[RMDB]
RNA sequence: GGGAACGACUCGAGUAGAGUCGAAAACACUCAAUUGUUCUAUAACACUUGUUUGGAAAACACAAAUGGGUUCCAAUGCAAUUGACAUAUGAGGGCACACUUGAACAUACUGCACAUUUUGCACUGGGCGUAGCGGUCACUUCGGUGACCGCUACGCAAAAGAAACAACAACAACAAC
Reactivity to 2A3 in 0.01 (KOAc 150mM, MgCl2 10mM, bicine 150mM(pH8.5), 24C), signal-to-noise 1, nucleotides 027 to 126: c010a000c030u040c000a090a200u200u080g000u000u020c040u200a040u130a260a000c030a040c100u040u050g020u040u030u070g000g030a010a010a010a010c080a030c100a270a160a300u100g010g010g000u000u010c070c000a040a070u080g000c000a010a050u000u070g050a080c000a010u000a020u060g030a130g080g000g040c030a000c010a000c070u000u090g020a030a000c050a050u110a010c020u000g010c140a020c000a140u000u140u200u030g070c090a070c070u020g040g070
Chemical mapping of a 177-nucleotide RNA with 2A3.
Reactivities are given for positions 27 through 126.